[RMDB]
RNA sequence: GGGAACGACUCGAGUAGAGUCGAAAACAUGGAUCGUUCGCGAUCCAUGGCAGGUGGUGGUGGGACCAGCCGACCCAGGCUUUUGGCAUCCCUGCCUUUCCAAUCCAGCCUAUUUCGAUAGGCUGAACUAGUCAGCCAAGUUCGCUUGGCUGACUAGAAAAGAAACAACAACAACAAC
Reactivity to 2A3 in 0.01 (KOAc 150mM, MgCl2 10mM, bicine 150mM(pH8.5), 24C), signal-to-noise 1, nucleotides 027 to 126: c010a000u000g010g000a020u000c010g020u130u030c250g000c010g110a010u000c000c000a000u000g000g000c060a020g000g110u120g000g000u060g010g160u050g010g150g060a070c000c040a010g020c000c000g110a220c000c030c010a030g020g020c000u140u170u190u290g020g020c000a020u030c010c010c040u000g010c040c000u010u060u010c030c000a020a050u050c040c000a000g020c020c000u020a000u040u070u020c100g100a020u010a000g010g050c000u000g000a010a000
Reactivity to DMS in 0.01 (KOAc 150mM, MgCl2 10mM, bicine 150mM(pH8.5), 24C), signal-to-noise 1, nucleotides 027 to 126: c060a000u010g000g000a000u000c000g030u000u010c230g000c040g020a000u000c000c010a000u000g030g020c140a050g000g020u000g010g020u000g000g060u010g000g010g010a120c080c070a030g010c000c000g010a090c120c080c050a140g010g010c020u000u000u010u010g010g010c040a080u000c040c030c010u000g010c010c070u000u000u020c000c010a110a130u020c110c020a010g020c000c000u000a010u000u000u010c110g010a030u000a010g010g000c000u000g000a010a040